[RMDB]
RNA sequence: GGGAACGACUCGAGUAGAGUCGAAAACAGUCAACAUUAUAGUUUUGAGAACUAUACACAUUGAUGAAUGUAAACUUAGUUUAUUCAUUUUUGUGGCAGAAAAGUGUUCUAUUGCAGGGUGGCCAACCUUUUUCUGUAAAGGUAUGGAAGAAAAAUACCAUAACGUUUAGUUCGCUAAACGUUAUGGAAAAGAAACAACAACAACAAC
Reactivity to 2A3 in 0.01 (KOAc 150mM, MgCl2 10mM, bicine 150mM(pH8.5), 24C), signal-to-noise 6, nucleotides 027 to 156: c030a010g150u110c030a040a020c020a080u060u130a040u080a070g030u000u040u080u190g170a100g020a020a000c010u010a010u020a080c010a000c000a010u030u020g010a000u010g010a040a020u080g040u210a030a060a060c060u120u120a050g030u060u020u030a020u010u020c000a000u000u000u020u030u040g010u030g030g030c080a040g120a070a100a030a030g080u050g030u080u000c040u050a080u040u110g030c050a040g040g000g040u040g040g020c010c010a010a020c020c000u030u020u010u030u070c100u100g110u140a010a010a040g020g020u060a170u060g030g030a060a020g070a050a100a010a010a030u200a060
Reactivity to DMS in 0.01 (KOAc 150mM, MgCl2 10mM, bicine 150mM(pH8.5), 24C), signal-to-noise 3, nucleotides 027 to 156: c060a190g010u000c070a060a060c050a070u000u000a060u000a030g010u000u000u000u020g020a220g000a030a040c000u000a060u000a080c050a030c020a030u000u000g010a020u000g010a040a050u010g020u010a060a020a070c050u000u000a160g020u000u000u000a060u000u000c020a030u000u000u000u000u010g040u000g020g040c060a140g000a050a060a060a110g010u000g000u010u000c040u000a080u000u010g030c050a070g010g010g030u000g010g020c040c020a040a050c020c000u000u000u000u020u020c150u020g020u000a030a020a030g010g000u000a060u000g010g010a070a080g010a030a070a050a050a100u010a150